[RMDB]
Source: RMDB library OK2TRN, as collected in RNAgym. The record gives the reactivity of an RNA of 177 nucleotides to DMS and 2A3. DMS adducts were read by reverse transcription with MarathonRT. The 2A3 profile rests on 5,068 reads. For DMS, 2,435 sequencing reads were counted. Reactivities are rounded to 0.1 and cut off at 0 and 3.

RNA sequence: GGGAACGACUCGAGUAGAGUCGAAAACGCUUGGCAGAAUCUACUACAAAGCACUAUCGGUGCAGAGGCUCCGUUAGUUCUAAACGCACAGUUAACUUAUUGUCAUGCUUCUAACAAUAUGAAAACACAUCAACGUAUGUUUCGACAUACGUUGAUGAAAAGAAACAACAACAACAAC
Reactivity to DMS in 0.01 (KOAc 150mM, MgCl2 10mM, bicine 150mM(pH8.5), 24C), signal-to-noise 3, nucleotides 027 to 126: c190g020c050u000u000g020g020c030a040g010a080a090u000c070u000a080c030u010a090c080a040a120a110g000c070a080c010u000a010u000c010g000g010u000g000c020a160g030a150g010g000c030u010c020c020g040u000u000a010g010u000u010c020u000a040a060a090c100g010c130a080c180a060g010u010u000a080a130c090u000u000a030u000u000g010u000c040a080u000g000c060u000u010c070u000a040a040c060a030a030u010a040u000g000a070a060a090a100c200a130
Reactivity to 2A3 in 0.01 (KOAc 150mM, MgCl2 10mM, bicine 150mM(pH8.5), 24C), signal-to-noise 5, nucleotides 027 to 126: c050g000c020u030u040g020g000c000a010g030a100a110u070c030u090a090c000u040a040c090a060a210a000g040c000a010c000u030a040u030c020g030g000u010g000c030a040g140a100g300g000c010u000c010c000g020u000u020a010g000u010u000c020u090a160a120a060c100g000c040a070c010a130g020u030u080a070a070c050u080u090a050u150u110g020u000c020a040u060g030c020u070u000c030u090a090a080c040a080a090u190a070u240g140a120a070a040a010c090a010